[RMDB]
Structure probing data (2A3 and DMS) for a 170-nucleotide construct. The data come from the RNA Mapping Database (RMDB), library 15KLIB. Conditions: 150 mM KOAc, 10 mM MgCl2 and 150 mM bicine (pH 8.5), 24 C.
RNA sequence: GGGAACGACUCGAGUAGAGUCGAAAACUCCCUUAGCAUCGGAGACCCGGGCCCCCUCCCAGGAAAGGGAACAGGGGGAAAUCGACCGGGUCCCGCAGAACCCGAUGGAGUCCCCCACCAUCCCUUCAGACCACCAGGUUCGCCUGGUGGAAAAGAAACAACAACAACAAC
Reactivity to 2A3 in 0.01 (KOAc 150mM, MgCl2 10mM, bicine 150mM(pH8.5), 24C), signal-to-noise 5, nucleotides 027 to 129: c020u010c020c000c020u020u110a120g050c060a100u120c050g020g000a130g000a220c000c000c000g000g030g020c000c000c000c000c000u060c020c010c000a070g080g240a230a120a080g030g030g000a040a020c060a100g000g010g000g010g060a020a010a060u150c040g110a080c000c000g010g010g000u000c000c000c000g000c010a010g010a030a020c010c020c030g040a040u070g020g000a010g050u080c000c000c000c000c000a030c000c000a030u010c000c000c000u070u030c010a030g050a100
Reactivity to DMS in 0.01 (KOAc 150mM, MgCl2 10mM, bicine 150mM(pH8.5), 24C), signal-to-noise 4, nucleotides 027 to 129: c120u000c000c000c000u010u000a120g010c110a100u080c070g030g010a000g030a080c050c000c050g050g000g000c010c020c010c000c060u050c000c000c050a230g020g090a130a160a140g060g000g010a240a080c200a130g040g010g030g010g010a000a000a000u050c270g040a100c030c010g000g000g000u020c000c030c010g000c160a100g030a110a110c140c040c000g000a080u040g030g020a060g030u000c000c000c000c000c000a090c070c080a110u020c050c160c040u010u040c040a130g020a110